[RMDB]
About this RNA:
Conditions: 150 mM KOAc, 10 mM MgCl2 and 150 mM bicine (pH 8.5), 24 C. Chemical mapping of a 207-nucleotide RNA with DMS and 2A3. DMS adducts were read by reverse transcription with MarathonRT. Values cover nucleotides 27 to 156.
RNA sequence: GGGAACGACUCGAGUAGAGUCGAAAAGAAACACAGGGUACUUGUUGGUGUAAUGCGACACAGUCCCCAGAGGUUGCAGAACACGAGAUUCCCCGAAAAAGUCAUUCUGACAGUGCUCGAGAUCAAUUUCUGUAAUGGCGUACGGCGAGUACAUGCCCUCUAGUACCUAAUUCGUUAGGUACUAGAGAAAAGAAACAACAACAACAAC
Reactivity to DMS in 0.01 (KOAc 150mM, MgCl2 10mM, bicine 150mM(pH8.5), 24C), signal-to-noise 4, nucleotides 027 to 156: g010a170a090a100c070a140c070a070g010g010g010u000a070c020u000u020g030u000u030g020g030u000g020u010a090a160u010g070c000g020a070c010a070c040a080g020u010c030c020c000c040a110g000a130g010g010u010u000g010c020a100g010a110a090c030a090c040g000a120g010a200u000u000c020c010c010c030g020a040a070a080a080a080g000u000c030a120u000u000c040u010g010a050c030a100g030u000g030c030u000c020g020a040g010a080u000c040a090a130u000u000u010c040u000g000u000a080a090u000g010g050c040g010u000a040c010g020g020c060g010a140g030u000a030c040a120u010g000c030c020
Reactivity to 2A3 in 0.01 (KOAc 150mM, MgCl2 10mM, bicine 150mM(pH8.5), 24C), signal-to-noise 5, nucleotides 027 to 156: g040a010a070a000c060a000c050a090g000g020g040u050a030c010u080u100g060u140u110g130g050u050g030u140a100a080u070g020c010g020a000c020a010c020a070g150u120c060c000c010c000a020g080a050g070g020u010u020g000c010a000g020a050a020c020a020c040g050a030g080a180u090u120c050c000c000c010g130a110a090a010a010a010g050u040c020a040u100u000c050u130g010a010c010a050g070u000g050c010u010c010g030a020g010a170u050c040a070a110u050u070u010c020u040g080u080a090a080u100g020g000c020g000u010a010c030g040g110c090g090a020g010u020a020c020a050u220g010c000c000